Structure probing data (DMS and 2A3) for a 177-nucleotide construct. Conditions: 150 mM KOAc, 10 mM MgCl2 and 150 mM bicine (pH 8.5), 24 C. For DMS, 969 sequencing reads were counted. Source: RMDB library RFM100, as collected in RNAgym.

RNA sequence: GGGAACGACUCGAGUAGAGUCGAAAAGAGCAGGCUGUCCCAAGUCAGGGUGGAGGGGGCGGCAUCACUGAGCUCUCGGCGCCAUGGUGGCAGUAUGAGCUAUGGCGGCAGUGGAGAGCAGGCAGCCGCGUGGAGCAGGAUUCGUCCUGCUCCACGCAAAAGAAACAACAACAACAAC
Reactivity to DMS in 0.01 (KOAc 150mM, MgCl2 10mM, bicine 150mM(pH8.5), 24C), signal-to-noise 1, nucleotides 027 to 126: g000a020g000c110a150g040g060c030u000g050u000c000c010c080a180a150g090u000c110a040g000g000g050u020g010g000a140g000g000g010g000g010c030g000g020c000a000u040c200a110c010u060g010a120g000c000u000c000u000c000g000g020c000g030c000c000a000u000g000g020u000g000g000c080a200g080u100a100u070g030a300g000c060u040a000u000g000g000c000g000g030c000a070g060u030g000g000a000g000a050g080c000a070g040g000c200a000g000c050c050
Reactivity to 2A3 in 0.01 (KOAc 150mM, MgCl2 10mM, bicine 150mM(pH8.5), 24C), signal-to-noise 2, nucleotides 027 to 126: g050a010g050c100a010g000g000c000u020g030u080c040c040c010a030a000g040u030c010a000g040g060g050u100g080g070a220g060g000g000g000g000c000g030g000c000a000u030c030a000c070u060g030a000g000c000u020c000u000c020g030g030c030g000c000c000a000u000g070g000u080g130g070c070a010g070u250a250u260g140a020g000c000u010a000u030g040g010c000g000g060c010a010g060u190g120g080a010g000a010g000c020a010g000g000c050a000g050c010c020